[RMDB]
RNA sequence: GGGAACGACUCGAGUAGAGUCGAAAAAGCUUGUCGGCCAGCGCCUGUGGACUGAGGUCGUCGACCGGCACCCCCAGCAGCGGGUCGAGGUUCUCGAACGGAAUCGUUCGACUGUGCACGGUCACCAGAGCACGCAGUACUUCGGUACUGCGUGCUCAAAAGAAACAACAACAACAAC
Reactivity to 2A3 in 0.01 (KOAc 150mM, MgCl2 10mM, bicine 150mM(pH8.5), 24C), signal-to-noise 1, nucleotides 027 to 126: a010g000c100u050u000g010u030c000g040g000c060c030a070g000c000g110c030c000u130g010u140g030g060a080c060u070g010a050g100g080u100c050g050u030c050g000a010c000c000g030g000c000a050c000c040c000c000c000a030g060c000a000g070c020g110g010g000u000c000g030a030g000g000u070u070c110u040c070g090a130a050c040g000g140a110a090u060c010g080u040u030c000g040a060c030u000g000u000g010c000a010c080g070g030u010c000a010c030c000a030
Structure probing data (2A3) for a 177-nucleotide construct. The reactions ran in a buffer of 150 mM KOAc, 10 mM MgCl2 and 150 mM bicine (pH 8.5), at 24 C. It was measured as part of the RMDB library OK1LIB.